[RMDB]
RNA sequence: GGGAACGACUCGAGUAGAGUCGAAAAGAUAUGGACCGAGUGGACAUGACCGAUAUCGGAAACGAUAUACGGUCAACAGCCACGUGGUCCUAAGUCAAACAUAGUUAGCACUUCGGUGCUAACUAUGCAUGAUUAACCCCUUCGGGGGUUAAUCAUGAAAAGAAACAACAACAACAAC
Reactivity to 2A3 in 0.01 (KOAc 150mM, MgCl2 10mM, bicine 150mM(pH8.5), 24C), signal-to-noise 3, nucleotides 027 to 126: g000a000u030a010u060g000g000a010c000c020g040a060g010u030g000g090a100c220a300u300g000a000c000c010g010a000u000a000u010c010g010g000a010a000a010c020g000a000u010a000u180a260c020g020g010u030c000a010a000c020a000g000c000c010a000c010g010u060g000g000u000c010c000u000a010a000g010u010c020a030a210a030c000a000u010a000g000u000u000a000g020c000a000c020u040u050c300g160g000u010g000c010u010a000a000c000u000a000u000g000
Reactivity to DMS in 0.01 (KOAc 150mM, MgCl2 10mM, bicine 150mM(pH8.5), 24C), signal-to-noise 4, nucleotides 027 to 126: g010a020u000a050u010g000g010a010c000c000g000a100g010u000g000g010a040c080a200u010g010a000c000c000g010a060u000a000u000c000g020g000a020a020a020c000g000a020u000a010u000a130c030g010g020u000c000a030a040c300a190g000c000c000a000c000g010u000g000g010u000c010c000u000a000a040g010u000c000a220a150a300c000a010u000a000g000u000u000a000g000c000a020c000u000u020c250g040g000u000g000c000u000a000a000c000u000a000u000g000